[RMDB]
RNA sequence: GGGAACGACUCGAGUAGAGUCGAAAAUGAUGAAGGAAGCAUGGUAAGGUACACGGAAAUUGAAGUUUUGGGUCGGCAUGUCUGCUCCCUCUGAUGCCUCUCUUUGGAGGAUAUGAUUUGGAGGCCUAAUAAUAUGACGUUUCGACGUCAUAUUAUUAAAAGAAACAACAACAACAAC
Reactivity to 2A3 in 0.01 (KOAc 150mM, MgCl2 10mM, bicine 150mM(pH8.5), 24C), signal-to-noise 9, nucleotides 027 to 126: u170g050a020u050g030a040a030g050g010a030a030g050c050a040u070g010g060u110a060a040g020g020u060a020c050a020c070g050g090a040a060a050u110u110g050a090a040g070u040u050u100u070g050g000g010u030c010g010g050c030a020u080g040u040c030u040g020c000u030c010c020c000u010c010u010g030a040u100g030c010c010u030c010u020c040u090u110u210g040g000a020g000g010a020u040a060u100g080a040u040u040u120g030g010a020g030g000c000c000u010
Reactivity to DMS in 0.01 (KOAc 150mM, MgCl2 10mM, bicine 150mM(pH8.5), 24C), signal-to-noise 9, nucleotides 027 to 126: u010g010a080u010g010a090a070g010g010a070a070g010c050a050u000g010g010u010a060a060g010g020u010a050c100a060c070g000g000a040a060a090u010u010g010a080a120g010u000u010u010u000g000g010g010u000c040g010g000c050a050u010g010u000c040u010g010c080u010c050c010c080u000c020u000g000a070u010g010c030c020u000c030u000c190u000u020u020g010g000a030g000g000a050u010a050u010g000a060u010u010u010g000g010a050g010g010c070c060u000
Background:
An RNA of 177 nucleotides, treated with 2A3 and DMS and read out base by base. Source: RMDB libraries RFM100 and RFMREP, as collected in RNAgym. Conditions: 150 mM KOAc, 10 mM MgCl2 and 150 mM bicine (pH 8.5), 24 C.